[RMDB]
RNA sequence: GGGAACGACUCGAGUAGAGUCGAAAAGAUAUGGAGUACUAGAUUCGCGUGUACUAUUCGGAAACGAACGAAUACACGAACUACGAAUCUGUACUCCUAAGUCAAAAUCUCAACUUCGGUUGAGAAACUUUUUACCGAUGUUCGCAUCGGUAAAAAGAAAAGAAACAACAACAACAAC
Reactivity to 2A3 in 0.01 (KOAc 150mM, MgCl2 10mM, bicine 150mM(pH8.5), 24C), signal-to-noise 1, nucleotides 027 to 126: g030a000u070a020u090g000g010a040g000u040a020c100u260a000g070a000u000u010c010g000c060g090u000g030u000a060c130u060a110u040u020c000g070g000a070a150a020c040g010a080a020c030g050a130a150u000a010c000a000c010g010a040a030c120u190a060c120g020a010a000u030c000u020g010u020a020c020u000c000c000u030a040a000g020u000c010a070a050a090a150u020c010u010c000a000a010c020u110u110c290g130g000u000u000g000a010g000a070a020a030
Reactivity to DMS in 0.01 (KOAc 150mM, MgCl2 10mM, bicine 150mM(pH8.5), 24C), signal-to-noise 1, nucleotides 027 to 126: g000a060u000a300u000g000g000a000g010u000a000c010u000a050g000a000u020u000c010g000c010g010u000g000u000a010c060u000a300u000u000c000g010g000a110a090a070c010g050a000a010c080g000a030a040u000a010c010a010c060g000a090a070c220u000a300c000g000a000a010u000c000u000g000u000a000c000u000c000c010u000a000a060g000u000c010a100a100a060a070u000c000u000c000a000a020c000u000u010c170g030g000u010u000g010a000g030a030a040a140
Chemical mapping of a 177-nucleotide RNA with 2A3 and DMS. The data come from the RNA Mapping Database (RMDB), library TTRDEL. 2A3 adducts were read by reverse transcription with SuperScript II with manganese. The DMS profile rests on 872 reads. The RNA was probed in 150 mM KOAc, 10 mM MgCl2 and 150 mM bicine (pH 8.5) at 24 C.